[RMDB]
RNA sequence: GGGAACGACUCGAGUAGAGUCGAAAAUGUCGUGGUGUGUUCUUUCGCGAGUGCCCCUGCUGGGUGGCUGCAUCGCGAUCGCGAGUUUGAUGUACACGGUUGGUUUAAUGGAGCCGCUUCUGGUGUCAUUCUUUGUGCGGUAGCGGUCAUUGUUGCAGCAUAAUUACCACUUCGGUGGUAAUUAUGCAAAAGAAACAACAACAACAAC
Reactivity to 2A3 in 0.01 (KOAc 150mM, MgCl2 10mM, bicine 150mM(pH8.5), 24C), signal-to-noise 2, nucleotides 027 to 156: u170g060u050c000g000u000g060g000u000g040u000g020u080u000c000u060u030u070c060g040c020g020a020g070u060g040c000c000c000c000u030g090c040u130g040g010g020u130g050g050c020u050g000c030a260u000c000g000c030g080a020u060c040g000c020g040a050g040u010u040u170g030a050u030g040u060a010c020a010c010g010g040u030u060g040g040u020u050u100a160a060u110g050g060a050g010c010c010g050c020u030u050c030u090g080g020u080g040u010c030a050u120u020c080u100u210u060g080u080g000c020g020g030u020a010g010c020g000g030u020c060a050u020u100g020u000u000g010c010a010

An RNA of 207 nucleotides, treated with 2A3 and read out base by base. For 2A3, 768 sequencing reads were counted. It was measured as part of the RMDB library OK3TST.